[RMDB]
RNA sequence: GGGAACGACUCGAGUAGAGUCGAAAAGGGGUCGAGUCGAUAAGGAUCGCCGUGAGCGACGAUCGUACGCUGAAGCCUCCACGGCGUACGGGAGCUCGGGGAUCCUUUUGACGACUCGACGGAGGCACCCAAAUCCAUUGACUUCGGUCAAUGGAAAUCACAAUCCCAUCUUCGGAUGGGAUUGUGAAAAAGAAACAACAACAACAAC
Reactivity to 2A3 in 0.01 (KOAc 150mM, MgCl2 10mM, bicine 150mM(pH8.5), 24C), signal-to-noise 1, nucleotides 027 to 156: g160g010g010g010u030c030g000a000g020u030c010g050a280u220a300a030g010g020a030u030c100g110c300c030g140u180g100a030g010c010g300a300c000g000a000u000c020g010u000a000c000g000c000u050g020a080a010g010c000c000u040c000c000a010c000g000g000c010g000u000a000c010g000g000g000a000g000c000u000c000g000g000g000g000a020u010c000c030u020u010u080u030g020a000c000g000a000c020u000c000g000a000c020g000g000a000g000g000c000a020c000c000c070a170a040a040u050c000c000a000u010u000g000a000c000u000u080c300g060g000u000c000a000a000u000g010g000a020a020a020